Source: RMDB library TTRDEL, as collected in RNAgym.
The record gives the reactivity of an RNA of 177 nucleotides to 2A3 and DMS.
For 2A3, 4,337 sequencing reads were counted.
2A3 adducts were read by reverse transcription with SuperScript II with manganese.
DMS (dimethyl sulfate) methylates the pairing face of unpaired adenines and cytosines.
[RMDB]
RNA sequence: GGGAACGACUCGAGUAGAGUCGAAAAGAUAUGGAAAGCACGAAUGUAUGAACUACUCACUCGGAAACGAGUGCAGCAUACACUAUGCUUUCCUAAGUCAAAACUUCUUCACUUCGGUGAAGAAGAACCCCCAAUUAUGGUUCGCCAUAAUUGGGGGAAAAGAAACAACAACAACAAC
Reactivity to 2A3 in 0.01 (KOAc 150mM, MgCl2 10mM, bicine 150mM(pH8.5), 24C), signal-to-noise 3, nucleotides 027 to 126: g000a020u040a020u110g000g020a000a000a000g000c040a000c130g090a300a220u030g020u020a010u020g020a090a070c060u220a070c020u300c050a000c020u010c010g020g040a090a100a050c010g000a000g010u000g000c000a010g020c000a000u030a020c000a010c070u040a020u060g000c000u000u000u010c000c000u000a090a010g010u020c010a000a020a200a200c010u000u000c020u000u010c010a000c020u040u160c300g130g020u010g000a000a000g010a010a000g000a000a000
Reactivity to DMS in 0.01 (KOAc 150mM, MgCl2 10mM, bicine 150mM(pH8.5), 24C), signal-to-noise 2, nucleotides 027 to 126: g000a040u010a300u000g000g010a020a010a010g020c020a030c110g040a080a030u000g000u010a010u010g000a040a050c150u030a300c020u000c010a020c010u000c000g020g010a090a090a130c030g020a010g020u000g030c120a050g010c000a010u000a000c010a000c050u000a180u000g020c010u000u000u000c000c000u000a010a110g000u000c020a090a060a100a070c000u000u000c000u000u000c000a000c000u000u000c190g010g010u000g040a010a000g000a010a000g000a100a120